[RMDB]
RNA sequence: GGGAACGACUCGAGUAGAGUCGAAAACUCCGAAUGCGGUCAGGAACAGGCUUUCCAAAUCGAAGUAUGUGGAUGUCCUUUGUUCCACCGUCAUUUCUGAUUCUUUGACCAUCGAUUUGGAAGCACGGUUGCCGUAGGCGUUCGCGCCUACGGCAACAAAAGAAACAACAACAACAAC
Reactivity to 2A3 in 0.01 (KOAc 150mM, MgCl2 10mM, bicine 150mM(pH8.5), 24C), signal-to-noise 1, nucleotides 027 to 126: c000u020c020c010g090a080a010u140g000c030g030g030u120c080a060g020g030a010a030c030a010g120g000c000u110u150u080c010c000a000a000a000u030c020g080a090a120g160u190a060u180g040u020g010g030a040u040g100u200c090c000u150u190u240g090u040u010c000c000a010c010c020g050u050c000a000u000u120u000c080u050g080a110u180u070c030u000u130u100g010a020c000c050a050u030c020g020a000u040u000u020g000g030a000a030g120c020a000c030g120
Overview
Structure probing data (2A3) for a 177-nucleotide construct. Values cover nucleotides 27 to 126. High 2A3 reactivity points to a flexible backbone, as in loops and unpaired stretches. The data come from the RNA Mapping Database (RMDB), library OK2TST. The reactions ran in a buffer of 150 mM KOAc, 10 mM MgCl2 and 150 mM bicine (pH 8.5), at 24 C.